[RMDB]
RNA sequence: GGGAACGACUCGAGUAGAGUCGAAAAGCUGCGCCAGUACGAGUACACAGCGCAUGCGCGUCAGUACGCGCGAUCCUGAUCCAGUACUAUACUGCGCCAGAGCGCUGGCCGGCGCUGGCCGAUCGCGAUCUAUUCGUAUCUUCGGAUACGAAUAGAUAAAAGAAACAACAACAACAAC
Reactivity to 2A3 in 0.01 (KOAc 150mM, MgCl2 10mM, bicine 150mM(pH8.5), 24C), signal-to-noise 8, nucleotides 027 to 126: g030c020u040g030c060g010c040c010a020g010u020a020c080g050a040g120u080a040c180a010c000a060g020c020g020c070a020u110g010c020g000c000g050u050c090a090g060u170a020c030g040c010g010c060g130a040u070c010c050u090g030a080u040c030c020a020g010u010a020c020u020a060u050a050c040u090g020c030g000c050c010a020g020a060g050c020g000c020u030g040g000c000c030g040g040c100g000c100u070g030g010c010c010g030a090u110c070g000c020g060
Reactivity to DMS in 0.01 (KOAc 150mM, MgCl2 10mM, bicine 150mM(pH8.5), 24C), signal-to-noise 9, nucleotides 027 to 126: g010c040u000g010c160g020c010c010a040g020u010a060c110g010a100g020u000a060c100a200c030a030g010c060g010c090a120u010g000c030g010c010g000u000c220a110g010u010a050c030g010c060g020c050g000a050u000c090c080u000g000a060u010c090c040a140g000u000a040c070u010a120u000a030c030u000g010c090g010c060c080a040g000a130g010c030g010c030u000g010g000c060c030g000g010c070g010c040u010g000g000c020c030g010a080u000c080g000c050g010
An RNA of 177 nucleotides, treated with 2A3 and DMS and read out base by base. The data come from the RNA Mapping Database (RMDB), library OK2TRN. The RNA was probed in 150 mM KOAc, 10 mM MgCl2 and 150 mM bicine (pH 8.5) at 24 C. 2A3 adducts were read by reverse transcription with SuperScript II with manganese.